This 177-nucleotide RNA was probed chemically with DMS and 2A3.
Source: RMDB libraries RFM100 and RFMREP, as collected in RNAgym.
High 2A3 reactivity points to a flexible backbone, as in loops and unpaired stretches.

RNA sequence: GGGAACGACUCGAGUAGAGUCGAAAACGGAAGCGGCUUGAGUAAUCAGCCUUCGACCGCCAGCUAACAAGCAGGCUUAAACCCGGAGGGAAGCAAUUCAGCACGGGGACCUGUCCGUGGGGAGGCGUGUAAUCAAAAUAUUCGUAUUUUGAUUACAAAAAGAAACAACAACAACAAC
Reactivity to DMS in 0.01 (KOAc 150mM, MgCl2 10mM, bicine 150mM(pH8.5), 24C), signal-to-noise 9, nucleotides 027 to 126: c080g010g000a060a110g020c300g010g010c030u000u010g020a040g010u020a120a090u010c060a090g010c020c010u000u010c040g000a170c090c060g000c010c020a060g010c040u000a090a110c200a070a100g010c010a050g000g000c110u010u010a040a100a140c040c000c010g000g000a210g000g000g020a050a040g010c160a080a080u010u000c050a050g000c040a230c030g000g000g000g000a090c070c020u010g000u010c040c070g010u010g000g000g010g000a080g010g010c070g010
Reactivity to 2A3 in 0.01 (KOAc 150mM, MgCl2 10mM, bicine 150mM(pH8.5), 24C), signal-to-noise 9, nucleotides 027 to 126: c040g020g030a050a010g040c040g060g000c060u140u190g030a030g040u160a090a130u070c030a020g000c000c000u020u020c020g050a050c010c010g010c020c010a040g010c020u060a090a070c040a110a040g010c020a010g030g000c010u080u170a080a110a120c010c010c000g020g010a050g020g040g020a020a010g030c040a040a130u090u070c020a020g020c040a020c040g010g000g000g010a020c000c010u030g050u030c010c020g020u060g010g020g000g010a010g010g000c030g010